[RMDB]
RNA sequence: GGGAACGACUCGAGUAGAGUCGAAAAUGCUGUGCAGUGGCUCACACCUGUAAUCCCUGUGCUUUGACAGGCCAAGGUAAGAGGAUCUCUUGAAACUAGGUGUUCAGAGCCAGCCUGGACAACACAGGAGGGUAGUUUCAUUCGUGAAACUACCCUCAAAAGAAACAACAACAACAAC
Reactivity to DMS in 0.01 (KOAc 150mM, MgCl2 10mM, bicine 150mM(pH8.5), 24C), signal-to-noise 2, nucleotides 027 to 126: u000g010c020u010g020u000g000c000a030g030u000g000g010c000u000c000a060c000a030c010c000u000g010u000a240a170u020c010c000c010u000g000u010g000c060u040u000u010g010a190c230a120g000g010c010c000a030a030g000g010u000a050a080g000a090g020g000a070u000c120u000c140u000u000g000a060a110a060c050u010a040g000g010u000g000u000u000c170a080g000a030g030c030c000a000g000c180c010u000g000g010a080c050a070a050c020a030c150a100g000
Reactivity to 2A3 in 0.01 (KOAc 150mM, MgCl2 10mM, bicine 150mM(pH8.5), 24C), signal-to-noise 1, nucleotides 027 to 126: u040g040c000u000g000u060g130c000a040g010u020g020g020c000u000c000a010c000a000c000c020u020g010u120a040a090u080c000c010c000u070g020u100g060c040u050u060u040g080a050c110a080g000g070c030c010a030a020g030g020u010a020a020g020a040g040g120a080u060c020u010c000u120u080g070a080a050a000c040u060a050g000g000u010g040u130u170c090a000g000a010g040c010c010a020g000c000c000u000g010g070a010c020a080a000c050a020c040a020g120

Structure probing data (DMS and 2A3) for a 177-nucleotide construct. 2A3 adducts were read by reverse transcription with SuperScript II with manganese. The data come from the RNA Mapping Database (RMDB), library OK2TRN. The reactions ran in a buffer of 150 mM KOAc, 10 mM MgCl2 and 150 mM bicine (pH 8.5), at 24 C.